[RMDB]
RNA sequence: GGGAACGACUCGAGUAGAGUCGAAAAGAAAGAAAGACUUUUUCGGAGCACAAACCCACACAUGCAUCGACACGAUGGCCUGGGUGCCCGCAAGGGUUGGUCAUUGGGAUGCGUGGAGGCCUAACAAUUAUGGAACUCUCUUCGGAGAGUUCCAUAAAAAAGAAACAACAACAACAAC
Reactivity to DMS in 0.01 (KOAc 150mM, MgCl2 10mM, bicine 150mM(pH8.5), 24C), signal-to-noise 2, nucleotides 027 to 126: g060a080a060a050g000a110a090a150g000a170c060u000u010u000u040u020c020g000g020a190g030c150a100c120a010a080a090c030c000c000a130c200a090c050a020u000g020c010a020u000c000g000a190c140a120c000g010a000u010g000g040c000c000u020g010g030g060u030g030c000c000c010g000c220a060a090g000g000g020u000u000g000g090u000c010a000u010u010g000g010g000a000u000g000c020g050u020g040g000a100g000g000c120c010u010a090a100c190a080a060
Reactivity to 2A3 in 0.01 (KOAc 150mM, MgCl2 10mM, bicine 150mM(pH8.5), 24C), signal-to-noise 2, nucleotides 027 to 126: g040a010a110a000g130a060a130a010g190a150c080u140u060u040u160u100c060g090g000a030g090c060a020c060a160a030a050c070c000c010a000c000a000c030a000u010g010c000a000u020c040g090a090c100a060c300g000a000u000g000g000c000c000u120g110g110g070u050g070c020c000c000g000c010a030a210g000g000g000u030u010g000g000u000c000a000u000u000g050g030g000a000u000g000c000g000u000g000g010a010g000g080c010c000u070a080a060c030a020a020

An RNA of 177 nucleotides, treated with DMS and 2A3 and read out base by base. For DMS the reverse transcriptase was MarathonRT. It was measured as part of the RMDB library RFM100. For DMS, 1,866 sequencing reads were counted. The reactions ran in a buffer of 150 mM KOAc, 10 mM MgCl2 and 150 mM bicine (pH 8.5), at 24 C.